[RMDB]
RNA sequence: GGGAACGACUCGAGUAGAGUCGAAAAGAUAUGGAUAAGCGACCUCGCUUAGCGUUUGACGUGACUAGCUCUUCGGAAACGAAGAGCUAGUCACCGAGCUAAGAACUACGAGGCUUAUCCUAAGUCAGAAUACCCUAGAGUUCGCUCUAGGGUAUUCAAAAGAAACAACAACAACAAC
Reactivity to DMS in 0.01 (KOAc 150mM, MgCl2 10mM, bicine 150mM(pH8.5), 24C), signal-to-noise 2, nucleotides 027 to 126: g020a040u010a300u000g010g000a000u000a000a020g030c100g000a240c300c000u000c000g010c010u020u000a000g030c040g010u010u000u020g040a040c300g010u000g000a010c000u000a010g000c000u000c000u000u000c010g010g010a110a100a260c030g020a030a000g010a000g010c000u010a000g000u000c000a000c010c020g000a130g010c000u010a030a000g000a140a050c200u030a300c020g000a010g010g000c000u000u000a010u010c010c000u010a040a090g040u040c070a200